An RNA of 177 nucleotides, treated with 2A3 and DMS and read out base by base. Values are in units of 0.01, from 0 to 300, in steps of 10. Conditions: 150 mM KOAc, 10 mM MgCl2 and 150 mM bicine (pH 8.5), 24 C. For 2A3 the reverse transcriptase was SuperScript II with manganese. The data come from the RNA Mapping Database (RMDB), libraries RFM100 and RFMREP.
RNA sequence: GGGAACGACUCGAGUAGAGUCGAAAAAUAUAAUACUACUUUUUCAUCCAUUAAACCCCUUACAAUGUCGAGUAAACGAAGCAUCUGUCCCCUGGUAUUGUCUUCGAGCUUGGUGUUUUUUUCUAGCUAUAAGUAUGAUGUUCGCAUCAUACUUAUAAAAAGAAACAACAACAACAAC
Reactivity to 2A3 in 0.01 (KOAc 150mM, MgCl2 10mM, bicine 150mM(pH8.5), 24C), signal-to-noise 3, nucleotides 027 to 126: a000u160a010u040a070a110u060a140c040u050a050c010u090u060u060u060u060c040a090u040c030c000a010u030u070a110a190a150c010c020c030c020u020u060a070c080a120a110u070g040u090c020g030a000g040u090a060a060a040c000g020a040a000g030c000a010u020c030u030g070u060c010c010c000c020u030g000g020u100a040u070u080g020u000c010u020u030c030g000a010g010c010u010u020g000g000u040g030u030u000u020u000u000u030u020c040u020a040g030c010
Reactivity to DMS in 0.01 (KOAc 150mM, MgCl2 10mM, bicine 150mM(pH8.5), 24C), signal-to-noise 5, nucleotides 027 to 126: a080u030a070u010a080a070u010a100c030u010a100c080u000u000u010u020u010c040a090u000c020c030a060u010u010a050a090a160c040c020c010c050u010u010a070c110a050a060u020g010u000c030g010a090g020u010a070a080a090c040g010a060a050g020c040a030u000c050u010g000u010c010c010c010c060u000g010g010u010a020u010u010g010u010c020u020u010c050g010a080g020c070u000u010g010g010u000g000u000u010u010u000u000u010u000c010u010a030g010c260